Notes
The data come from the RNA Mapping Database (RMDB), library RNAMAK. This 207-nucleotide RNA was probed chemically with 2A3. The RNA was probed in 150 mM KOAc, 10 mM MgCl2 and 150 mM bicine (pH 8.5) at 24 C.
RNA sequence: GGGAACGACUCGAGUAGAGUCGAAAAGGCUCUCUUCGGAGAGCCAAAAAAACCUUUGUGUAGCUUACUAGACUUGGAUUUACGAAUCCCAUUGGGAUUCGUUGUCAGUCUAUUAAGACCCUACACUCUGGUAAAAACAUUCUGUUCGCAGAAUGAAGAUAGAUCAGAACUUCGGUUCUGAUCUAUCAAAAGAAACAACAACAACAAC
Reactivity to 2A3 in 0.01 (KOAc 150mM, MgCl2 10mM, bicine 150mM(pH8.5), 24C), signal-to-noise 2, nucleotides 027 to 156: g000g000c000u010c010u020c040u080u100c180g020g010a020g030a020g000c000c010a010a010a000a000a000a000a000c010c000u000u000u000g000u000g000u010a010g010c000u010u010a010c010u000a030g010a030c040u100u230g240g010a090u300u300u130a050c000g030a000a000u010c000c040c130a300u260u300g010g000g000a000u010u000c000g010u000u010g000u000c000a000g000u000c000u000a000u000u000a010a010g020a040c170c010c000u020a000c010a010c000u000c010u000g000g000u120a160a070a070a000a030c000a010u000u000c000u070g070u100u080c270g070c100a030g030a050a000u150g020a010a030